[RMDB]
RNA sequence: GGGAACGACUCGAGUAGAGUCGAAAAGAUAUGGACUAGGUGGACUCCAACAGCUCGGAAACGAGACAUGGAGAUCACUAGUCCUAAGUCAAACAAUACCCCUCAAGUUCGCUUGAGGGGUAUUGAACAGGAGAUUAGUCUUCGGACUAAUCUCCUGAAAAGAAACAACAACAACAAC
Reactivity to 2A3 in 0.01 (KOAc 150mM, MgCl2 10mM, bicine 150mM(pH8.5), 24C), signal-to-noise 1, nucleotides 027 to 126: g010a000u060a020u070g030g010a000c000u030a030g300g090u090g070g040a040c010u000c000c010a060a100c110a120g000c030u000c000g040g060a100a110a070c020g000a010g040a020c040a070u110g000g010a000g000a010u000c000a000c020u000a000g030u000c000c000u000a000a000g000u000c010a100a060a060c030a000a010u010a010c030c000c070c000u010c000a020a000g020u110u120c190g080c300u000u000g000a020g000g000g000g070u000a010u010u010g010a000a010
Reactivity to DMS in 0.01 (KOAc 150mM, MgCl2 10mM, bicine 150mM(pH8.5), 24C), signal-to-noise 1, nucleotides 027 to 126: g010a010u000a300u010g010g010a020c000u000a040g010g070u000g020g000a070c010u000c000c010a050a070c300a110g000c000u020c020g000g000a120a040a190c000g010a010g000a020c090a270u000g020g000a010g010a050u000c010a010c010u010a020g000u000c000c000u000a000a090g010u000c020a110a150a130c010a010a010u000a020c010c000c000c010u010c000a010a000g010u000u020c180g020c000u000u000g000a000g010g040g000g000u000a000u000u000g010a080a220
Annotation
Chemical mapping of a 177-nucleotide RNA with 2A3 and DMS. The DMS profile rests on 964 reads. It was measured as part of the RMDB library TTRDEL.